[RMDB]
RNA sequence: GGGAACGACUCGAGUAGAGUCGAAAAAAAGAUAUGGAGUGGAGAUAGCUACCGCGGACGAGGUGAGAUCGGAAACGAUCUCACUACCCACCGUCCGAACUACGGUCGAAACCACUCCUAAGUCAAACAAAUUUACCAUGUUCGCAUGGUAAAUUUGAAAAGAAACAACAACAACAAC
Reactivity to 2A3 in 0.01 (KOAc 150mM, MgCl2 10mM, bicine 150mM(pH8.5), 24C), signal-to-noise 1, nucleotides 027 to 126: a000a000a010g000a000u010a000u050g000g000a030g030u010g000g030a160g060a250u240a090g070c210u160a030c000c000g010c000g010g000a000c010g010a010g000g020u010g010a000g000a000u010c010g010g000a000a000a000c010g000a000u010c010u000c010a000c010u010a000c000c030c000a030c010c000g010u010c010c010g000a020a010c050u160a050c040g000g050u060c040g030a260a070a070c000c000a000c000u000c000c000u000a000a000g000u000c000a020a100a010
Reactivity to DMS in 0.01 (KOAc 150mM, MgCl2 10mM, bicine 150mM(pH8.5), 24C), signal-to-noise 3, nucleotides 027 to 126: a050a070a110g000a010u000a040u000g020g000a020g040u000g020g000a090g020a180u000a130g020c250u010a040c010c010g020c000g030g010a010c000g010a110g010g000u000g000a010g000a010u010c000g000g000a010a010a020c000g010a010u000c010u000c000a010c010u000a020c070c010c060a300c030c000g000u000c000c000g010a020a010c070u000a300c040g000g000u000c050g000a200a200a110c020c000a000c000u000c010c000u000a000a100g000u000c000a120a100a130